[RMDB]
RNA sequence: GGGAACGACUCGAGUAGAGUCGAAAAGAUAUGGACGCUCUACCCACCCUUGAAGACCGUUGAAAUCGGAAACGAUGGAGGUCGUAGAGGAGGAGCGUCCUAAGUCAAAGCUCCCUUCGGGGAGCAAGGGAGUGAUAUUGUUCGCAAUAUCACUCCCAAAAGAAACAACAACAACAAC
Reactivity to DMS in 0.01 (KOAc 150mM, MgCl2 10mM, bicine 150mM(pH8.5), 24C), signal-to-noise 2, nucleotides 027 to 126: g050a060u010a230u000g000g020a010c050g000c000u000c010u000a110c000c010c010a300c120c000c000u020u000g010a130a280g000a010c000c010g040u000u000g000a160a060a000u000c000g000g010a130a080a140c000g010a030u000g020g000a080g000g030u000c000g000u000a140g010a030g000g000a100g010g010a000g030c010g000u000c000c010u000a000a090g000u000c250a110a140a050g000c000u000c000c010c020u000u000c150g000g020g000g010a000g000c010a000a030
This 177-nucleotide RNA was probed chemically with DMS. DMS adducts were read by reverse transcription with MarathonRT. The RNA was probed in 150 mM KOAc, 10 mM MgCl2 and 150 mM bicine (pH 8.5) at 24 C. The DMS profile rests on 1,217 reads.